[RMDB]
This 177-nucleotide RNA was probed chemically with 2A3 and DMS. It was measured as part of the RMDB library M2PK50. For DMS, 2,255 sequencing reads were counted. For DMS the reverse transcriptase was MarathonRT. Conditions: 150 mM KOAc, 10 mM MgCl2 and 150 mM bicine (pH 8.5), 24 C.
RNA sequence: GGGAACGACUCGAGUAGAGUCGAAAAUCGGAUAUGUUCGCAUAUCCGAAAAUAAACUUGACACGCGGUCAAGAAAAACGCGAAAAAUAAAAGAACAAUCAAAAACGAAGAUCUUCGGAUCUUCGAAUCCGUAUAACUAGUUCGCUAGUUAUACGGAAAAAGAAACAACAACAACAAC
Reactivity to 2A3 in 0.01 (KOAc 150mM, MgCl2 10mM, bicine 150mM(pH8.5), 24C), signal-to-noise 2, nucleotides 027 to 126: u010c000g000g010a010u000a000u010g010u030u050c190g000c120a010u010a000u000c000c010g000a000a010a000a010u010a000a030a020c010u020u010g000a010c000a000c070g070c050g050g050u030c010a020a110g180a170a070a000a010a000c050g000c040g270a130a060a060a000a000u260a040a090a030a020g110a080a040c050a030a060u120c050a020a090a070a010a020c000g010a000a010g000a010u000c000u040u070c200g070g000a010u000c000u020u000c010g020a000a020
Reactivity to DMS in 0.01 (KOAc 150mM, MgCl2 10mM, bicine 150mM(pH8.5), 24C), signal-to-noise 2, nucleotides 027 to 126: u000c000g010g020a000u000a000u000g020u020u010c210g040c000a010u000a000u000c000c000g000a000a020a060a100u000a050a110a190c040u000u000g000a000c030a040c060g010c080g010g010u000c010a020a060g000a060a020a020a010a040c030g030c030g010a010a070a090a070a080u010a090a020a090a100g020a080a080c140a020a090u010c160a080a040a080a090a130c010g000a020a000g000a000u000c000u000u000c220g010g000a020u000c000u000u000c010g000a040a050